[RMDB]
RNA sequence: GGGAACGACUCGAGUAGAGUCGAAAAUAGCCGUUAUGCGCGAAGCGGUGUAGCGUCACUUUGAUGGCGGUACUAUGAAUUGAUGCAAGGUGUGGAGCGACCUUAAACAGUUCUGGUGGUGCUCUGCAAAACAAAUAGGCGUUCGCGCCUAUUUGAACUAACCUUCUUGGUUCGCCAAGAAGGUUAGAAAAGAAACAACAACAACAAC
Reactivity to 2A3 in 0.01 (KOAc 150mM, MgCl2 10mM, bicine 150mM(pH8.5), 24C), signal-to-noise 7, nucleotides 027 to 156: u070a010g020c010c010g020u040u050a110u180g080c080g010c030g040a040a010g020c030g000g020u050g020u070a040g090c010g010u030c020a040c080u190u160u230g150a240u090g060g000c020g000g050u020a020c020u030a040u170g060a070a040u090u070g050a050u090g080c030a040a020g050g000u030g020u050g040g010a010g010c030g020a030c000c000u050u110a090a090a020c030a040g020u060u020c010u060g050g030u050g010g040u040g010c010u000c030u050g010c030a020a040a060a050c000a000a010a000u000a000g000g010c010g040u030u040c250g000c000g000c040c000u000a000u000u000u000g000a010a000
Reactivity to DMS in 0.01 (KOAc 150mM, MgCl2 10mM, bicine 150mM(pH8.5), 24C), signal-to-noise 1, nucleotides 027 to 156: u000a140g010c010c020g010u000u000a050u000g000c060g020c070g020a110a080g010c030g010g000u000g010u000a020g000c020g040u000c020a010c050u000u000u020g020a080u010g030g000c010g040g010u000a090c050u000a110u000g020a080a070u010u000g010a140u000g020c110a120a080g030g000u000g000u000g030g020a030g040c020g010a050c020c030u010u000a030a090a120c020a120g010u000u000c030u000g010g010u000g000g000u000g000c030u000c040u000g030c040a030a050a080a160c010a000a020a040u000a030g000g010c000g030u000u000c300g020c000g080c010c000u000a000u000u000u000g020a060a170